Chemical mapping of a 177-nucleotide RNA with DMS. Source: RMDB library TTRDEL, as collected in RNAgym. DMS adducts were read by reverse transcription with MarathonRT. The RNA was probed in 150 mM KOAc, 10 mM MgCl2 and 150 mM bicine (pH 8.5) at 24 C.
[RMDB]
RNA sequence: GGGAACGACUCGAGUAGAGUCGAAAAGAUAUGGACCUCUCGGAUAGGCGUUGAUCUCGGAAACGAGGGAGCCUUUCCGAGGAGGUCCUAAGUCAAAGAGAUCAGGUGCUUCGGCACCUGAUCUCAACCAUUUUCGGAAGUUCGCUUCCGAAAAUGGAAAAGAAACAACAACAACAAC
Reactivity to DMS in 0.01 (KOAc 150mM, MgCl2 10mM, bicine 150mM(pH8.5), 24C), signal-to-noise 1, nucleotides 027 to 126: g010a040u000a300u000g000g000a000c000c000u000c000u000c000g000g000a000u000a010g030g030c000g020u000u010g000a060u000c000u000c000g020g000a040a130a180c010g030a020g000g000g000a020g000c000c000u000u000u000c010c000g000a020g000g010a030g000g000u000c000c000u000a010a070g010u000c020a110a130a130g010a000g000a010u000c000a010g010g020u000g010c000u000u020c200g010g030c000a000c000c000u000g010a000u000c000u000c020a030a080